[RMDB]
RNA sequence: GGGAACGACUCGAGUAGAGUCGAAAAGGGAAUGGUGGUUUACCCCGUUAUCAAAUGAGUACCGACCAAUAAUUGGCGAAACUCGUUUCGCGUUGGCUGCCUAAUUCAAGGAAUUAGCGUGCCUUCAAAGACAUCAAGAAGUUCGCUUCUUGAUGAACAUCUAUAGACUGUUCGCAGUCUAUAGAUGAAAAGAAACAACAACAACAAC
Reactivity to 2A3 in 0.01 (KOAc 150mM, MgCl2 10mM, bicine 150mM(pH8.5), 24C), signal-to-noise 6, nucleotides 027 to 156: g050g010g020a060a060u090g030g020u050g050g000u090u100u170a120c010c000c010c010g040u070u080a130u130c090a040a050a060u110g010a000g000u020a030c020c040g140a230c080c070a040a060u250a180a130u160u080g010g000c010g020a070a050a020c020u010c050g030u010u040u050c090g000c030g020u010u020g010g010c050u070g030c020c020u000a010a020u020u010c090a170a080g200g020a090a000u000u010a010g020c030g040u020g000c010c000u040u000c030a070a070a020g080a040c000a000u010c000a000a000g000a010a000g020u040u150c190g030c120u000u000c000u000u010g000a000u000g000a000a000
Reactivity to DMS in 0.01 (KOAc 150mM, MgCl2 10mM, bicine 150mM(pH8.5), 24C), signal-to-noise 3, nucleotides 027 to 156: g000g010g010a090a050u010g020g040u000g000g010u000u000u000a100c020c010c000c020g020u000u000a090u000c040a080a060a040u000g000a060g020u000a080c020c010g010a070c010c000a070a130u010a100a180u010u000g010g010c020g000a130a110a030c020u000c020g010u000u000u000c100g020c100g000u020u000g010g020c030u010g000c090c010u000a010a020u000u000c030a140a170g030g020a070a060u000u000a050g010c050g030u000g010c020c010u010u000c040a060a090a140g000a130c010a010u000c010a000a000g000a010a010g020u000u000c300g030c010u000u000c010u000u000g000a010u010g000a040a130

Source: RMDB library M2RFPK, as collected in RNAgym. This 207-nucleotide RNA was probed chemically with 2A3 and DMS. 2A3 is a SHAPE reagent: it acylates the 2'-hydroxyl of flexible nucleotides of all four kinds.